RNA sequence: GGGAACGACUCGAGUAGAGUCGAAAACUAGAGGCAGCAACAACCACGGCAGCGCUGGCCACGUCCUCCGCCACGGAGGCUUCUGCAGCGGACAGCUAUCCUGCCGUACAGCAGAACGGCGGCCACGGAAAAGGCUACGUUUCGACGUAGCCUUUUCAAAAGAAACAACAACAACAAC
Reactivity to DMS in 0.01 (KOAc 150mM, MgCl2 10mM, bicine 150mM(pH8.5), 24C), signal-to-noise 2, nucleotides 027 to 126: c070u000a080g010a130g000g010c050a000g030c030a070a100c060a060a130c140c100a040c030g000g020c040a030g030c210g040c060u000g010g010c040c060a120c060g030u000c010c000u000c010c050g000c200c150a070c210g060g010a010g000g020c210u000u020c020u000g030c050a120g030c030g000g000a070c010a010g040c060u000a090u010c300c050u000g000c000c020g010u010a030c300a070g000c060a050g020a090a090c100g010g000c010g000g000c020c020a070c170g000